Structure probing data (2A3 and DMS) for a 207-nucleotide construct. High DMS reactivity at an A or C suggests that its Watson-Crick edge is free. The RNA was probed in 150 mM KOAc, 10 mM MgCl2 and 150 mM bicine (pH 8.5) at 24 C. The data come from the RNA Mapping Database (RMDB), library OK3TST. 2A3 adducts were read by reverse transcription with SuperScript II with manganese. The 2A3 profile rests on 6,766 reads.
RNA sequence: GGGAACGACUCGAGUAGAGUCGAAAAGAACUUUUGGGUGGCCAAUGUGCUCUCUUGCACUGUAGGUGCAAUGUCUGUAGGUAAGCAGACAUUACCUAGGAUAUAUCAUCCAGGAUUAUGAAGGGUCCUUAGCUGAUAGCGUCUCUUCCUUCAUCUAAGUCAGCUAAAAUUUCGAUUUUAGCUGACUAAAAGAAACAACAACAACAAC
Reactivity to 2A3 in 0.01 (KOAc 150mM, MgCl2 10mM, bicine 150mM(pH8.5), 24C), signal-to-noise 7, nucleotides 027 to 156: g010a020a060c040u060u090u130u100g030g000g000u030g020g030c030c040a110a120u120g020u040g020c020u020c010u030c060u120u130g020c020a010c020u040g060u110a030g000g020u040g040c060a010a010u000g000u000c000u010g090u040a090g100g220u110a150a060g020c000a000g000a000c000a010u010u030a020c000c000u010a050g020g020a030u080a020u020a020u190c040a010u010c010c000a010g020g010a030u040u050a030u140g020a030a020g000g000g010u000c010c010u060u080a030g000c040u060g100a120u080a050g030c020g060u030c020u010c000u100u060c000c000u020u060c010a040u000c020u050a050
Reactivity to DMS in 0.01 (KOAc 150mM, MgCl2 10mM, bicine 150mM(pH8.5), 24C), signal-to-noise 4, nucleotides 027 to 156: g000a090a060c060u000u000u000u000g010g010g040u010g010g040c080c060a090a140u000g020u010g020c000u000c180u000c110u000u000g010c030a050c030u010g020u000a100g030g030u000g000c070a040a030u000g020u000c000u000g010u000a080g040g010u010a130a230g010c010a090g010a050c040a040u000u000a020c000c030u000a100g020g000a140u000a100u000a120u010c050a060u000c000c020a150g010g000a080u010u000a050u000g010a100a060g010g010g010u000c020c020u000u000a080g010c030u000g010a090u000a070g010c060g000u000c030u000c060u000u000c020c010u000u010c020a070u000c090u000a100